[RMDB]
RNA sequence: GGGAACGACUCGAGUAGAGUCGAAAAGAGAUACGGUCCCAAUUGUGGGAGAAACCCAUCAUUGGUGUUACCCAACCCCCACCUCAACAUCAGAUUUAUGGCGGGUGGGUUGAUAGCAUUGAGCCAACGUACUAUACGUUACGGAAUCAUUUUGAGCUAACACCAAUCCCUUCGGGGAUUGGUGUUAAAAAGAAACAACAACAACAAC
Reactivity to 2A3 in 0.01 (KOAc 150mM, MgCl2 10mM, bicine 150mM(pH8.5), 24C), signal-to-noise 1, nucleotides 027 to 156: g100a000g000a030u050a140c150g000g120u050c010c010c010a010a020u030u050g020u020g000g000g000a180g170a300a110a190c000c000c000a010u030c030a010u010u000g000g000u080g100u080u180a050c000c000c000a000a120c010c010c050c020c000a000c010c010u110c040a140a300c040a180u200c020a000g170a220u140u240u090a060u110g010g000c040g020g010g000u020g000g000g000u000u060g010a010u010a050g060c090a060u000u080g000a010g000c020c000a000a030c000g050u000a000c100u100a150u050a230c070g000u050u060a030c060g090g000a100a100u080c050a120u020u120u100u300g080a050g010c110
Reactivity to DMS in 0.01 (KOAc 150mM, MgCl2 10mM, bicine 150mM(pH8.5), 24C), signal-to-noise 1, nucleotides 027 to 156: g000a140g000a080u000a060c110g020g060u000c000c000c020a190a220u000u000g040u010g010g000g020a160g000a060a140a220c020c000c010a050u000c200a130u000u000g010g010u070g010u010u040a030c000c050c050a040a180c020c000c020c000c010a030c000c040u010c070a040a140c120a170u020c070a260g000a100u000u000u000a030u000g000g030c000g020g040g020u000g040g010g020u010u000g030a060u030a060g000c050a130u000u010g010a040g020c040c060a260a090c040g050u000a010c040u010a070u010a130c090g030u000u000a110c080g000g020a150a130u000c100a100u010u000u010u000g000a090g000c180
The record gives the reactivity of an RNA of 207 nucleotides to 2A3 and DMS.
The data come from the RNA Mapping Database (RMDB), library OK3TST.
Reactivities are given for positions 27 through 156.
The reactions ran in a buffer of 150 mM KOAc, 10 mM MgCl2 and 150 mM bicine (pH 8.5), at 24 C.
For DMS, 1,351 sequencing reads were counted.
2A3 adducts were read by reverse transcription with SuperScript II with manganese.